[RMDB]
An RNA of 177 nucleotides, treated with DMS and 2A3 and read out base by base. The DMS profile rests on 732 reads. DMS adducts were read by reverse transcription with MarathonRT. For 2A3 the reverse transcriptase was SuperScript II with manganese.
RNA sequence: GGGAACGACUCGAGUAGAGUCGAAAAGUCUAGCGAACGGAUCCCACCCGGGAUACACGCAAGUCGCGAAUUAGGCCGACCGGCCAAGGUCAAUUGCAGAACUCAACUGCAUGAGUAAGCUAGACGACCUGAUAUCGACGUUCGCGUCGAUAUCAGGAAAAGAAACAACAACAACAAC
Reactivity to DMS in 0.01 (KOAc 150mM, MgCl2 10mM, bicine 150mM(pH8.5), 24C), signal-to-noise 2, nucleotides 027 to 126: g000u000c030u000a000g020c000g000a140a080c070g000g030a020u000c000c010c000a170c300c080c240g000g000g000a120u000a020c010a150c050g000c050a080a050g020u000c130g030c030g000a130a060u000u010a090g010g010c010c040g010a150c150c150g000g000c040c030a090a130g020g000u000c080a030a040u030u000g050c010a040g000a090a090c160u010c180a080a040c000u000g020c030a100u000g020a170g000u030a030a170g000c020u000a010g020a030c000g000a140
Reactivity to 2A3 in 0.01 (KOAc 150mM, MgCl2 10mM, bicine 150mM(pH8.5), 24C), signal-to-noise 1, nucleotides 027 to 126: g000u000c000u000a000g000c000g020a000a000c000g020g000a020u000c030c000c010a040c030c030c060g000g000g000a060u060a140c180a030c060g060c020a070a040g180u120c040g020c030g090a060a150u170u050a210g060g000c040c030g090a110c050c090g030g000c000c000a020a010g000g000u060c030a040a090u080u010g000c010a010g040a200a100c040u090c250a070a100c020u000g000c000a030u010g010a030g020u060a010a030g000c000u010a000g010a000c010g000a010